[RMDB]
RNA sequence: GGGAACGACUCGAGUAGAGUCGAAAAUGGCGGCUAGGCAUCGCACCUCUAUCCGGUGUCAAACCAAUGGCGCAGACCUCAGGCACCGAGCGCGUAUUUCGGAGCAUGUGUUUCGGGGGCAGGCAUGCAUAUCUAUAACCUUCGGGUUAUAGAUAUGAAAAGAAACAACAACAACAAC
Reactivity to DMS in 0.01 (KOAc 150mM, MgCl2 10mM, bicine 150mM(pH8.5), 24C), signal-to-noise 9, nucleotides 027 to 126: u010g010g020c050g010g000c040u010a120g010g010c040a050u000c140g010c060a080c080c030u010c110u000a080u010c110c080g030g010u000g000u010c050a060a100a120c070c070a080a100u010g010g010c030g020c050a090g000a090c060c030u000c080a070g010g000c030a060c030c030g010a060g010c070g010c080g010u000a090u000u000u000c060g010g000a100g020c050a060u000g010u010g000u000u000u000c050g010g000g000g010g010c050a070g000g010c060a050u000g010
Reactivity to 2A3 in 0.01 (KOAc 150mM, MgCl2 10mM, bicine 150mM(pH8.5), 24C), signal-to-noise 3, nucleotides 027 to 126: u100g080g010c020g020g010c030u040a030g030g000c000a030u030c020g030c030a040c020c030u050c050u100a140u090c040c020g020g010u020g020u040c030a060a040a080c030c030a060a080u090g040g000c030g000c050a030g060a110c000c010u050c070a050g040g020c020a010c030c020g010a030g010c080g000c020g020u090a170u030u130u090c030g030g010a040g040c050a050u090g060u010g020u060u130u100c050g020g000g000g020g010c020a020g030g020c010a010u090g020

The record gives the reactivity of an RNA of 177 nucleotides to DMS and 2A3.
Conditions: 150 mM KOAc, 10 mM MgCl2 and 150 mM bicine (pH 8.5), 24 C.
For DMS the reverse transcriptase was MarathonRT.